[RMDB]
RNA sequence: GGGAACGACUCGAGUAGAGUCGAAAACAGACUCACUUCGGUGAGUCUGAAAGGAGUAAUCGAUAGCGAAAACUACCAGAUUAGUCAAGGGUAGUGACAAAAAAAGUUAGAGCUUCGGCUCUAACAACUUACAACGAUAGUUCGCUAUCGUUGUAAGAAAAGAAACAACAACAACAAC
Reactivity to DMS in 0.01 (KOAc 150mM, MgCl2 10mM, bicine 150mM(pH8.5), 24C), signal-to-noise 7, nucleotides 027 to 126: c020a010g000a020c000u010c000a010c000u000u010c190g020g010u010g010a010g010u000c000u000g000a020a090a090g000g010a060g000u010a040a030u000c020g010a040u010a020g010c040g000a070a060a130a130c010u000a010c010c000a180g010a050u000u000a050g010u000c040a120a110g010g000g010u000a050g010u000g010a080c120a010a000a060a060a050a070a130g010u000u000a000g000a010g010c000u000u010c220g030g000c000u000c000u000a000a000c000a050a060
Reactivity to 2A3 in 0.01 (KOAc 150mM, MgCl2 10mM, bicine 150mM(pH8.5), 24C), signal-to-noise 7, nucleotides 027 to 126: c000a000g000a000c000u000c010a010c000u040u050c100g100g010u000g000a000g000u010c000u000g000a010a000a000g080g020a070g050u150a080a080u100c080g050a090u110a080g130c070g060a070a050a050a010c000u010a010c000c010a020g020a210u120u170a080g140u110c070a060a060g090g000g000u010a010g000u020g020a020c090a010a190a020a020a000a010a010g000u010u000a000g010a000g000c010u040u040c280g060g000c000u000c000u000a000a000c000a000a010